[RMDB]
RNA sequence: GGGAACGACUCGAGUAGAGUCGAAAAGUAUAGGAUGGCAACGGUAACUGCUACACAAAUACCGAUCAAAAGAAGAAUACCAAUCAUUUAUUGACAAUAACUUCACUAUUGAUCAAGUAUGCAAUAUAUCAUCUUUUCACUAAAUAAGUAGUAAUAAGUCUGUUGCGAUAUUCGUAUCGCAACAGACAAAAGAAACAACAACAACAAC
Reactivity to 2A3 in 0.01 (KOAc 150mM, MgCl2 10mM, bicine 150mM(pH8.5), 24C), signal-to-noise 1, nucleotides 027 to 156: g120u120a060u100a070g000g110a050u040g000g000c060a130a080c070g040g010u030a010a010c030u000g050c000u190a100c010a000c000a140a160a100u170a070c010c040g010a000u030c010a000a070a070a000g140a080a000g000a040a040u010a120c000c000a010a070u070c000a080u040u090u300a150u090u090g000a040c000a070a160u080a060a050c000u130u220c030a000c060u010a030u040u000g000a000u030c000a030a030g030u000a010u080g070c000a140a000u110a010u000a030u220c100a070u030c030u000u030u030u050c060a000c030u110a040a000a250u120a090a050g040u060a000g040u040a130a110u060a040a040